[RMDB]
This 177-nucleotide RNA was probed chemically with DMS.
Values cover nucleotides 27 to 126.
RNA sequence: GGGAACGACUCGAGUAGAGUCGAAAAGAUAUGGACCCAUCAUGUGAGCCGAUGAAAUCGGAAACGAUGGAGGCUACAUGAGUGGGUCCUAAGUCAAAAGAGACACAAAGUUCGCUUUGUGUCUCAACAUAGCAGGGAAGUUCGCUUCCCUGCUAUGAAAAGAAACAACAACAACAAC
Reactivity to DMS in 0.01 (KOAc 150mM, MgCl2 10mM, bicine 150mM(pH8.5), 24C), signal-to-noise 4, nucleotides 027 to 126: g000a040u000a300u000g000g000a010c000c000c000a060u000c000a000u000g000u010g010a010g010c000c000g010a100u010g020a090a130a040u000c000g000g000a090a070a190c010g010a010u000g000g000a100g010g020c000u000a020c010a010u000g010a030g020u000g000g000g020u000c000c000u000a000a070g000u000c050a090a080a130a140g000a010g000a020c000a000c000a000a000a010g010u000u020c240g010c000u000u000u000g010u000g000u000c010u000c000a020a100
It was measured as part of the RMDB library TTRDEL.